[RMDB]
This 177-nucleotide RNA was probed chemically with DMS and 2A3.
The data come from the RNA Mapping Database (RMDB), libraries RFM100 and RFMREP.
The RNA was probed in 150 mM KOAc, 10 mM MgCl2 and 150 mM bicine (pH 8.5) at 24 C.
RNA sequence: GGGAACGACUCGAGUAGAGUCGAAAAUGGCCUGUUGCAUCGGAUCGAAGUAGCCGCCCGGGUUGCCCGCCAUCCAGGUAUAGGUACGGGUCGAGCUGAGCCAUUGCAGGAACAGAUAGACCGCCUCGCUACAGAGAUGUUUCGACAUCUCUGUAGCAAAAGAAACAACAACAACAAC
Reactivity to DMS in 0.01 (KOAc 150mM, MgCl2 10mM, bicine 150mM(pH8.5), 24C), signal-to-noise 3, nucleotides 027 to 126: u020g020g020c030c020u000g020u020u020g020c080a080u020c040g000g000a100u010c050g010a060a080g000u020a100g020c010c030g010c060c030c020g000g020g020u000u010g000c030c010c050g010c090c070a050u000c040c050a090g000g030u030a090u030a080g000g030u000a070c070g000g000g020u000c040g030a080g010c010u010g010a050g010c000c020a090u010u010g000c160a130g000g010a030a070c040a020g000a040u000a090g010a130c020c030g000c030c020u000c170
Reactivity to 2A3 in 0.01 (KOAc 150mM, MgCl2 10mM, bicine 150mM(pH8.5), 24C), signal-to-noise 3, nucleotides 027 to 126: u080g040g010c020c010u030g030u050u080g050c040a060u040c080g040g030a020u030c030g040a140a020g070u100a010g030c020c000g010c020c010c000g030g020g000u040u140g020c000c000c020g000c010c000a070u090c070c060a030g020g020u080a130u140a150g010g010u030a040c040g020g000g040u040c040g030a050g010c020u040g010a010g020c000c010a030u010u150g060c060a040g030g030a080a030c010a010g050a040u140a030g020a030c010c020g020c000c020u050c050